[RMDB]
An RNA of 207 nucleotides, treated with 2A3 and read out base by base. As a SHAPE reagent, 2A3 marks flexible, mostly unpaired nucleotides at the ribose 2'-OH. Reactivities are given for positions 27 through 156. The RNA was probed in 150 mM KOAc, 10 mM MgCl2 and 150 mM bicine (pH 8.5) at 24 C.
RNA sequence: GGGAACGACUCGAGUAGAGUCGAAAACCUCACUACAUUUUACUGUUCCUAAAGAGUUUGUGACAGGUACAGUAAAACGUAUUGCAAGGUUUAUCAGUUCCUAUAAACAGGUAAAUAACAAUAUAUGAAAAGCAAAGACUGUUCGCAGUCUUUGCAAGCUGUAACCACAGUUCGCUGUGGUUACAGCAAAAGAAACAACAACAACAAC
Reactivity to 2A3 in 0.01 (KOAc 150mM, MgCl2 10mM, bicine 150mM(pH8.5), 24C), signal-to-noise 2, nucleotides 027 to 156: c010c000u030c000a010c040u000a000c000a010u030u000u000u000a000c000u000g010u020u100c000c000u070a070a210a040g150a120g110u150u170u190g140u120g080a070c070a020g000g000u010a000c000a000g000u000a000a000a000a000c010g000u020a010u000u020g000c070a050a040g000g000u000u040u040a100u110c030a010g030u010u010c000c000u030a060u220a120a090a020c120a020g040g050u080a120a130a000u160a090a000c040a070a120u040a010u030a010u300g090a100a040a030a020g000c000a000a000a000g000a000c000u000g030u020u030c250g000c070a000g000u000c000u000u000u000g010c000a000a000